[RMDB]
RNA sequence: GGGAACGACUCGAGUAGAGUCGAAAACGGUUUACUGGCGGUUUUUUUUCGCCGUCAUAAAAAUCAGGCCCCUUGUACACAACUGUAACAAGGGGCCGGUUAGGUGAGGGAUUAUCUCCGUUCAUUAACCUUCGUUAAUAUUCGUAUUAACGAAGGUAAAAGAAACAACAACAACAAC
Reactivity to 2A3 in 0.01 (KOAc 150mM, MgCl2 10mM, bicine 150mM(pH8.5), 24C), signal-to-noise 9, nucleotides 027 to 126: c010g010g030u040u050u050a080c090u050g010g000c030g000g080u050u010u010u000u010u010u060u220c070g000c010c000g000u000c000a000u070a020a070a000a000a000u040c050a060g010g000c000c010c000c000u000u000g020u050a010c060a010c020a160a300c210u150g030u170a240a010c010a000a000g000g010g000g000c000c000g000g000u010u020a020g000g020u050g030a060g060g070g030a100u080u070a050u090c030u010c020c010g020u050u080c060a130u090u130a050
Reactivity to DMS in 0.01 (KOAc 150mM, MgCl2 10mM, bicine 150mM(pH8.5), 24C), signal-to-noise 7, nucleotides 027 to 126: c030g000g010u000u000u000a050c300u010g010g010c000g000g000u000u000u010u040u020u010u040u020c160g010c000c000g010u000c010a040u010a010a020a020a020a020u000c010a070g050g010c000c000c000c000u000u000g000u010a030c030a070c230a070a110c290u020g000u000a070a020c010a020a000g000g000g010g010c000c000g000g000u000u000a030g010g000u000g000a030g000g020g010a150u010u000a030u010c030u000c010c030g000u000u010c100a090u010u010a110
This 177-nucleotide RNA was probed chemically with 2A3 and DMS. For 2A3 the reverse transcriptase was SuperScript II with manganese. Conditions: 150 mM KOAc, 10 mM MgCl2 and 150 mM bicine (pH 8.5), 24 C. Reactivities are given for positions 27 through 126.